[RMDB]
RNA sequence: GGGAACGACUCGAGUAGAGUCGAAAACCAUAACAGUUCGCUGUUAUGGACUGUCGGAAUGCGGAUUAAUUAAUCGUCCGCUUACGAUUAAUACCGACUAUAAAGCGUAACACUUCGGUGUUACGAAGGCAGUCCUAGAAUUCGUUCUAGGACUGCCAAAAGAAACAACAACAACAAC
Reactivity to DMS in 0.01 (KOAc 150mM, MgCl2 10mM, bicine 150mM(pH8.5), 24C), signal-to-noise 1, nucleotides 027 to 126: c000c000a010u000a000a010c000a020g000u000u010c180g000c020u000g000u000u000a010u000g000g000a110c220u010g010u000c000g000g000a120a090u000g000c000g060g000a030u010u020a050a120u000u000a060a150u030c290g010u000c050c030g010c010u000u000a130c100g000a030u000u000a100a110u000a140c000c000g030a070c190u000a100u010a050a110a160g020c010g000u000a000a010c030a000c000u000u000c160g000g020u000g000u000u000a010c000g010a060a030
Reactivity to 2A3 in 0.01 (KOAc 150mM, MgCl2 10mM, bicine 150mM(pH8.5), 24C), signal-to-noise 2, nucleotides 027 to 126: c000c010a030u020a000a000c000a010g020u020u060c100g100c060u010g000u020u000a000u000g000g000a030c040u050g000u010c010g020g030a070a070u120g010c000g000g000a000u000u130a140a190u080u260a060a100u300c030g000u030c030c010g000c000u000u070a000c000g000a000u000u060a020a020u060a080c020c000g020a010c040u060a080u080a300a090a040g010c000g040u000a000a000c000a000c010u040u060c300g080g000u010g010u000u010a000c010g010a000a000
Structure probing data (DMS and 2A3) for a 177-nucleotide construct. DMS adducts were read by reverse transcription with MarathonRT. The reactions ran in a buffer of 150 mM KOAc, 10 mM MgCl2 and 150 mM bicine (pH 8.5), at 24 C.